RNA sequence: GGGAACGACUCGAGUAGAGUCGAAAAGGCAGCAGCAGCAGCUCCAGCGAUUGCGUCUGUAAUUGCGGCUCCAGUCACAAUAGCAGCCGUCUCGAGGUCUGGCGUGUCGGAUGUAUCAGCAAGCUGCUAAUUCGAUCGAGUUCGCUCGAUCGAAUUAAAAAGAAACAACAACAACAAC
Reactivity to 2A3 in 0.01 (KOAc 150mM, MgCl2 10mM, bicine 150mM(pH8.5), 24C), signal-to-noise 3, nucleotides 027 to 126: g070g030c010a000g000c000a000g000c000a020g000c000a010g050c000u010c040c010a060g030c040g040a080u100u210g010c040g030u060c020u080g120u150a000a120u050u050g020c000g010g000c010u050c060c020a050g050u140c040a030c030a170a180u130a130g030c040a000g000c010c000g030u100c090u080c080g110a080g020g100u040c020u060g050g000c030g020u070g010u050c050g020g010a070u060g060u080a150u080c000a020g050c020a040a120g010c000u010g000c010
Reactivity to DMS in 0.01 (KOAc 150mM, MgCl2 10mM, bicine 150mM(pH8.5), 24C), signal-to-noise 2, nucleotides 027 to 126: g000g000c050a000g020c050a100g000c010a100g010c050a140g000c020u000c050c040a080g000c010g010a030u000u040g020c000g020u050c050u070g040u000a070a060u020u000g030c110g000g020c040u020c100c130a100g010u000c020a080c060a120a080u000a150g030c030a050g000c030c040g000u030c100u000c070g010a170g000g010u020c040u000g000g000c130g010u020g010u000c000g020g000a070u030g040u000a100u000c130a090g010c080a040a060g000c000u010g010c020